[RMDB]
RNA sequence: GGGAACGACUCGAGUAGAGUCGAAAACUGAGCGGCGAAGUCAUCAGCGUAGUCGCCGGCGUCUAUCAGGUGCUGGUCCGCUUCAGCGACAGCGCACCGGCCAAGCUGCUGGACGUGAAGGCCAGCGAUACUGGCGUCAUUUCGAUGACGCCAGUAUAAAAGAAACAACAACAACAAC
Reactivity to 2A3 in 0.01 (KOAc 150mM, MgCl2 10mM, bicine 150mM(pH8.5), 24C), signal-to-noise 2, nucleotides 027 to 126: c040u060g050a020g020c000g010g000c000g050a100a030g050u150c060a160u040c050a150g070c020g040u040a000g030u000c000g000c000c000g020g020c020g000u040c010u070a080u030c030a010g300g040u130g100c010u010g010g010u030c060c030g070c020u060u010c080a130g080c030g070a060c050a010g000c000g000c000a020c030c040g000g000c030c030a120a020g060c030u040g010c000u020g020g010a010c030g070u090g060a090a010g030g040c030c020a030g020c050g000
Reactivity to DMS in 0.01 (KOAc 150mM, MgCl2 10mM, bicine 150mM(pH8.5), 24C), signal-to-noise 2, nucleotides 027 to 126: c030u000g000a090g050c010g030g000c040g000a060a170g000u000c060a100u000c100a140g000c030g010u000a130g010u000c020g010c000c010g010g000c020g000u000c020u000a090u010c070a030g000g020u000g020c000u000g010g010u000c110c010g000c050u010u000c120a110g010c070g010a100c180a030g010c000g020c250a060c030c030g000g000c010c070a080a160g000c030u000g010c000u000g000g010a020c010g010u000g000a150a080g010g020c030c050a060g010c080g000